[RMDB]
RNA sequence: GGGAACGACUCGAGUAGAGUCGAAAAGUUAUGCUCUCGCUGCCUAAUGGCGGUGCGGGAAACCCACUCUAAAGUCCUUAAGGUUAGCCCCUUAAGGCGGGGUUCGGAGGCACCUGGCAACAGAAGCUGAAACUGUGCACAUUCGUGUGCACAGUAAAUAAAUCUUAAGAUUCGUCUUAAGAUUUAUAAAAGAAACAACAACAACAAC
Reactivity to 2A3 in 0.01 (KOAc 150mM, MgCl2 10mM, bicine 150mM(pH8.5), 24C), signal-to-noise 4, nucleotides 027 to 156: g080u120u130a160u300g040c000u000c010u020c010g000c010u060g020c010c010u300a300a180u210g000g000c050g000g080u040g010c050g030g000g000a040a020a030c000c060c020a060c050u180c090u180a140a130a300g300u010c000c010u000u040a000a000g010g010u030u090a040g010c010c000c000c000u000u000a000a000g000g000c000g000g000g000g000u030u280c090g090g020a020g010g000c000a000c000c000u020g260g000c000a010a000c000a010g020a000a000g000c000u000g000a070a020a010c000u000g000u000g000c000a000c000a040u050u100c210g090u030g000u010g000c000a000c000a000g000u000a000a020
Reactivity to DMS in 0.01 (KOAc 150mM, MgCl2 10mM, bicine 150mM(pH8.5), 24C), signal-to-noise 2, nucleotides 027 to 156: g030u010u010a040u000g000c000u000c030u000c020g060c020u000g010c010c000u000a140a140u040g030g010c060g030g020u000g000c040g050g000g000a010a040a100c020c010c000a170c120u000c100u000a070a080a080g010u010c000c010u000u000a020a020g010g020u010u000a270g010c280c300c000c000u010u000a000a010g050g020c000g020g020g000g030u000u000c040g030g030a300g010g010c040a030c030c000u000g000g030c030a090a120c030a090g000a080a070g010c000u000g000a130a050a070c020u010g020u010g030c000a010c000a090u000u010c290g030u000g020u000g010c000a000c000a010g010u000a020a060